[RMDB]
Background
Structure probing data (DMS and 2A3) for a 177-nucleotide construct. Reactivities are given for positions 27 through 126. Reactivities are rounded to 0.1 and cut off at 0 and 3. The data come from the RNA Mapping Database (RMDB), library TTRDES. For 2A3, 2,576 sequencing reads were counted. For DMS, 1,245 sequencing reads were counted.

RNA sequence: GGGAACGACUCGAGUAGAGUCGAAAAGAUAUGGAUCUCGCGUACAGGGAGACGUUCGUCGGAAACGACGGUCAGCGUCAUCGAUCUGUGAUCGAGAUCCUAAGUCAAAAGGCACGUUCGCGUGCCAGAAAUUAGUUCCCUUCGGGGAACUAAUUUCAAAAGAAACAACAACAACAAC
Reactivity to DMS in 0.01 (KOAc 150mM, MgCl2 10mM, bicine 150mM(pH8.5), 24C), signal-to-noise 2, nucleotides 027 to 126: g010a030u000a300u010g000g010a000u000c000u000c010g020c300g000u040a010c020a030g050g000g020a020g000a010c000g020u000u000c000g010u000c000g000g020a160a070a090c000g000a030c000g000g000u020c280a140g020c010g040u000c000a290u020c240g010a050u010c000u010g000u000g000a050u010c000g000a030g010a000u000c000c000u000a000a060g000u000c060a130a050a200a110g010g000c010a030c010g010u000u040c170g020c030g040u000g000c020c010a040
Reactivity to 2A3 in 0.01 (KOAc 150mM, MgCl2 10mM, bicine 150mM(pH8.5), 24C), signal-to-noise 1, nucleotides 027 to 126: g010a040u070a010u130g000g000a000u010c000u010c020g000c070g040u150a030c000a000g050g000g000a020g060a010c010g030u150u120c010g000u010c010g000g000a060a050a040c020g000a010c020g000g000u160c200a020g000c010g030u000c000a180u300c010g040a020u020c000u000g030u060g020a070u170c040g030a000g020a010u000c000c000u010a030a010g040u000c020a020a090a130a000g000g000c000a000c020g000u040u110c300g030c010g160u020g020c000c010a000